[RMDB]
The record gives the reactivity of an RNA of 177 nucleotides to DMS and 2A3. For DMS, 1,549 sequencing reads were counted. The 2A3 profile rests on 1,390 reads. The RNA was probed in 150 mM KOAc, 10 mM MgCl2 and 150 mM bicine (pH 8.5) at 24 C. It was measured as part of the RMDB library OK1LIB. DMS (dimethyl sulfate) methylates the pairing face of unpaired adenines and cytosines. For DMS the reverse transcriptase was MarathonRT.
RNA sequence: GGGAACGACUCGAGUAGAGUCGAAAACGAAGUCCAAUGCGGCGGGAAUCGAGGCCACGUUGGCCAAGCUGAGCGAUCAGUACGCCCGCGGUAGGGCAUGACGCCAUGGGGGCGUGUCGGUGUACCGCGGGCUCCGCCUGUUCGCAGGCGGAGCCCGAAAAGAAACAACAACAACAAC
Reactivity to DMS in 0.01 (KOAc 150mM, MgCl2 10mM, bicine 150mM(pH8.5), 24C), signal-to-noise 1, nucleotides 027 to 126: c110g070a070a060g010u020c000c010a140a050u000g000c020g000g000c010g010g020g000a050a100u010c120g000a150g000g030c040c000a260c130g010u010u050g000g090c000c180a050a100g000c030u000g000a030g010c300g000a050u000c000a000g000u000a160c100g000c000c000c000g030c030g000g000u030a090g000g000g000c000a030u030g010a080c090g010c000c040a170u020g000g000g060g020g050c010g020u080g000u030c000g000g000u030g000u080a080c000c010g010
Reactivity to 2A3 in 0.01 (KOAc 150mM, MgCl2 10mM, bicine 150mM(pH8.5), 24C), signal-to-noise 2, nucleotides 027 to 126: c070g050a130a030g000u030c010c000a010a030u140g010c030g030g000c000g000g040g040a060a020u100c090g010a120g010g000c010c000a070c210g070u080u250g000g050c020c000a070a020g000c000u010g000a010g040c020g120a150u070c000a000g050u010a050c040g020c000c010c000g020c010g040g020u120a110g020g100g000c050a050u120g070a030c020g010c020c040a150u250g100g040g000g000g000c010g000u000g040u000c020g000g000u050g020u070a020c020c020g010